RNA sequence: GGGAACGACUCGAGUAGAGUCGAAAAGCGACGUCGCUCGCCGUGCCCGCGCUCGACGCGCUCGCGGGCGACAUCGCGAGCGGCUGGUACGGCGACCCGAGCGAUGCGAUGUUCUCGGUCGGCGUGAGGCGUACUCGGUAUUCGUACCGAGUACGCCAAAAGAAACAACAACAACAAC
Reactivity to DMS in 0.01 (KOAc 150mM, MgCl2 10mM, bicine 150mM(pH8.5), 24C), signal-to-noise 1, nucleotides 027 to 126: g030c030g000a020c130g010u000c020g030c020u000c000g020c030c160g030u000g000c040c070c000g000c010g020c100u000c080g000a120c180g000c020g000c050u000c050g010c060g020g000g010c000g030a060c050a010u020c260g010c000g000a010g030c020g010g000c010u000g030g000u010a030c030g000g000c010g000a040c020c040c070g020a050g010c120g010a070u020g010c160g010a060u010g010u000u000c000u010c000g040g010u000c010g020g000c010g010u000g000a110
Reactivity to 2A3 in 0.01 (KOAc 150mM, MgCl2 10mM, bicine 150mM(pH8.5), 24C), signal-to-noise 1, nucleotides 027 to 126: g040c000g080a050c020g030u020c000g000c020u000c000g030c010c070g010u020g040c000c030c010g040c020g000c000u180c070g210a240c080g050c020g010c120u030c040g030c040g000g000g040c030g050a030c020a040u070c040g000c030g010a000g030c050g080g010c000u030g020g030u120a020c020g000g100c050g030a020c020c030c050g000a020g000c010g090a100u150g100c100g100a060u170g080u060u020c030u020c010g010g000u010c000g030g110c040g020u040g100a060

This 177-nucleotide RNA was probed chemically with DMS and 2A3. DMS adducts were read by reverse transcription with MarathonRT. The DMS profile rests on 1,476 reads. For 2A3 the reverse transcriptase was SuperScript II with manganese.